[RMDB]
Structure probing data (DMS and 2A3) for a 207-nucleotide construct.
For 2A3 the reverse transcriptase was SuperScript II with manganese.
For DMS, 2,262 sequencing reads were counted.
Source: RMDB library ARCHII, as collected in RNAgym.
The reactions ran in a buffer of 150 mM KOAc, 10 mM MgCl2 and 150 mM bicine (pH 8.5), at 24 C.

RNA sequence: GGGAACGACUCGAGUAGAGUCGAAAAACCGUCAAAUUGCGGGAACAUCCUAAGAGCUAUCGACCACCAAGCAGGCUGCUGAAAGGCGUCUGUGGCCGGAUUAACGACUCCGGGUAAGGUAACAGCGUCGGUAGAUGAAGCUUCCCUGACCGGAGGCCAUUCUUACCGUGUUCGCACGGUAAGAAUGAAAAGAAACAACAACAACAAC
Reactivity to DMS in 0.01 (KOAc 150mM, MgCl2 10mM, bicine 150mM(pH8.5), 24C), signal-to-noise 1, nucleotides 027 to 156: a080c020c000g030u000c020a060a110a180u020u000g000c010g060g030g000a130a080c070a120u010c000c040u000a060a100g050a050g010c000u020a010u000c020g020a040c000c010a010c010c030a160a300g000c000a050g000g030c000u000g030c010u000g000a140a060a190g000g030c000g020u010c020u010g000u010g020g000c000c010g000g030a130u000u010a090a060c150g000a120c170u000c000c000g010g000g000u000a020a160g020g010u000a060a070c050a010g010c110g060u010c010g000g030u000a030g010a070u010g010a110a140g040c030u000u000c010c020c000u000g010a200c130c020g020g010a080g010g020c050
Reactivity to 2A3 in 0.01 (KOAc 150mM, MgCl2 10mM, bicine 150mM(pH8.5), 24C), signal-to-noise 4, nucleotides 027 to 156: a000c030c010g040u080c070a090a190a300u240u220g000c030g010g000g030a060a050c020a150u040c000c020u080a160a050g060a030g120c000u000a000u000c000g000a000c000c010a010c030c040a020a010g010c000a000g020g000c020u210g000c000u020g200a060a020a020g060g010c000g000u010c000u000g020u030g010g000c000c000g020g000a010u120u090a100a100c140g030a020c010u000c000c000g000g010g000u060a170a030g010g000u010a020a010c010a000g000c010g040u000c000g000g010u000a000g000a010u070g080a040a010g000c000u010u020c010c000c020u040g060a020c010c040g000g000a000g010g000c000